[RMDB]
RNA sequence: GGGAACGACUCGAGUAGAGUCGAAAACAACGGCACUCGUCGAUACACGUGUUGGCAGUGCCUGCGUUAGACAGGUAUCCAACCAGACCCACCGUACUUACGGGCGACGCGGAGAAGGAAGCGUCCACACCCUUUUACCGUUCGCGGUAAAAGGGUGAAAAGAAACAACAACAACAAC
Reactivity to DMS in 0.01 (KOAc 150mM, MgCl2 10mM, bicine 150mM(pH8.5), 24C), signal-to-noise 4, nucleotides 027 to 126: c030a030a300c230g000g000c000a040c030u010c180g050u000c000g010a050u000a070c110a120c300g020u000g040u000u000g000g030c150a050g000u000g000c000c000u000g020c280g020u000u000a060g000a110c160a060g010g010u000a060u000c100c120a060a060c010c050a060g010a150c030c010c010a150c020c000g040u000a110c160u000u010a050c030g000g000g000c100g010a010c020g030c010g010g010a150g030a110a090g010g000a100a110g010c070g020u000c030c090a210
Reactivity to 2A3 in 0.01 (KOAc 150mM, MgCl2 10mM, bicine 150mM(pH8.5), 24C), signal-to-noise 3, nucleotides 027 to 126: c020a000a040c000g010g000c010a010c040u070c180g020u000c010g040a010u080a060c150a050c230g160u080g010u100u000g000g000c030a020g000u000g000c000c000u000g000c010g060u040u030a080g100a080c040a040g020g030u050a080u140c070c030a030a090c020c010a030g090a080c010c000c010a040c020c010g020u050a110c060u230u140a030c030g030g040g000c030g010a000c000g030c020g020g110a190g090a170a010g110g030a080a010g030c010g020u020c010c000a030